[RMDB]
This 207-nucleotide RNA was probed chemically with 2A3 and DMS. Reactivities are given for positions 27 through 156. Conditions: 150 mM KOAc, 10 mM MgCl2 and 150 mM bicine (pH 8.5), 24 C.
RNA sequence: GGGAACGACUCGAGUAGAGUCGAAAAGGUGUACUCACUGUUCUUACUGUCAAAUGCACUGUAACAUCCAUGUUAGUUUGAUACAUGCUGUUGGAUUUGGGUUCUUGUUCAACUGUCUCCGUUUUUUGUAUAUAAUUAGCCACUGAUCCCAUCCUGACAGCAUAAUCAGCUUCGGCUGAUUAUGCUGAAAAGAAACAACAACAACAAC
Reactivity to 2A3 in 0.01 (KOAc 150mM, MgCl2 10mM, bicine 150mM(pH8.5), 24C), signal-to-noise 2, nucleotides 027 to 156: g020g000u060g030u050a010c020u040c080a070c080u040g050u110u060c070u090u100a100c060u040g030u050c060a060a100a080u100g000c040a030c060u100g040u160a080a020c010a090u010c020c010a060u080g010u040u020a060g030u030u190u020g090a080u070a020c000a010u050g040c010u030g020u050u050g000g010a060u140u010u070g030g020g000u010u060c050u050u060g010u040u110c070a110a070c030u050g040u020c030u030c040c050g060u060u000u050u030u080u030g070u020a090u010a000u000a100a150u040u060a010g050c030c010a030c040u000g020a060u010c020c000c000a020u060c000c000u010g050a040
Reactivity to DMS in 0.01 (KOAc 150mM, MgCl2 10mM, bicine 150mM(pH8.5), 24C), signal-to-noise 1, nucleotides 027 to 156: g000g010u010g030u000a060c050u000c040a110c080u020g000u000u020c070u030u010a060c070u000g000u010c060a080a060a130u000g020c070a080c050u000g010u000a080a080c090a060u000c100c050a120u010g000u000u000a070g010u010u000u020g020a190u000a030c050a050u000g040c040u000g030u000u000g030g000a150u000u000u000g030g010g010u010u000c030u000u010g010u000u010c060a030a090c020u000g000u010c000u000c010c060g030u000u000u000u010u000u000g000u000a080u010a120u000a080a080u000u020a120g030c020c010a160c030u020g010a130u010c000c020c030a180u000c000c040u010g000a300